[RMDB]
RNA sequence: GGGAACGACUCGAGUAGAGUCGAAAAUUGGAUUGUCAGCAAAGGUGUGCGACUCUAUAAUCCAAAGCUUGUGGGAGGAAUUCACCUCGCCUGUGACCGAUUGUAGAGUCAUACACCUCUACUGACCUUUUUACUGCAUUUUCGAAUGCAGUAAAAAAAAAGAAACAACAACAACAAC
Reactivity to 2A3 in 0.01 (KOAc 150mM, MgCl2 10mM, bicine 150mM(pH8.5), 24C), signal-to-noise 9, nucleotides 027 to 126: u080u070g100g070a060u100u160g000u000c010a000g000c060a100a020a000g000g000u000g000u000g010c020g000a000c000u000c000u000a010u010a010a000u000c000c020a070a130a020g020c030u130u120g060u240g120g080g020a030g010g060a150a140u240u180c070a130c050c000u010c030g300c010c000u020g040u070g020a050c020c030g000a000u000u010g010u000a000g000a010g000u000c000a000u000a000c000a000c000c000u000c000u010a000c000u000g010a010c000c000
Reactivity to DMS in 0.01 (KOAc 150mM, MgCl2 10mM, bicine 150mM(pH8.5), 24C), signal-to-noise 6, nucleotides 027 to 126: u010u020g010g010a140u020u020g010u000c010a000g000c040a080a090a020g000g020u000g010u000g010c080g000a010c010u000c000u000a000u000a010a010u000c000c020a060a170a300g010c000u000u000g000u050g000g010g010a030g000g010a190a240u040u050c240a120c000c000u000c000g000c000c010u000g000u000g000a090c300c300g000a010u000u000g010u000a010g000a010g000u000c000a020u010a000c010a010c010c000u000c030u000a070c010u010g000a020c010c090